RNA sequence: GGGAACGACUCGAGUAGAGUCGAAAAAAAAACGAUGAUCCAGUUGUAGCGGUGAUUAUCGUAGCUAUCAGCUGGAUCUUCAAUCGGUGGCGACACCGAACGAUAACCGCAGACAUGCUGAAAAAAAACUGUAAUGUUACUUCGGUAACAUUACAGUAAAAGAAACAACAACAACAAC
Reactivity to DMS in 0.01 (KOAc 150mM, MgCl2 10mM, bicine 150mM(pH8.5), 24C), signal-to-noise 4, nucleotides 027 to 126: a030a020a020a040a040c180g010a010u000g010a010u000c000c000a030g020u000u010g030u000a030g000c010g000g020u020g000a200u010u010a090u010c060g030u010a150g010c000u000a020u010c030a010g030c000u000g000g010a010u000c010u000u000c030a100a100u000c000g000g000u000g000g000c300g000a210c000a010c000c000g010a030a050c200g000a050u010a050a120c050c060g010c040a030g000a110c250a030u020g030c050u000g000a000a010a010a090a060a060a070
Reactivity to 2A3 in 0.01 (KOAc 150mM, MgCl2 10mM, bicine 150mM(pH8.5), 24C), signal-to-noise 3, nucleotides 027 to 126: a000a000a000a000a000c080g000a020u050g000a000u010c000c000a010g000u010u000g010u010a000g000c020g060g120u140g140a200u110u300a140u240c060g030u020a040g000c000u010a030u210c010a000g000c010u000g000g010a000u010c010u010u000c000a000a040u030c000g000g000u010g000g000c020g020a020c000a010c010c000g010a020a000c010g010a030u070a080a060c020c020g000c030a030g070a100c060a100u100g050c040u080g090a090a010a000a000a000a000a010

Source information
Chemical mapping of a 177-nucleotide RNA with DMS and 2A3. DMS adducts were read by reverse transcription with MarathonRT. Conditions: 150 mM KOAc, 10 mM MgCl2 and 150 mM bicine (pH 8.5), 24 C. High DMS reactivity at an A or C suggests that its Watson-Crick edge is free.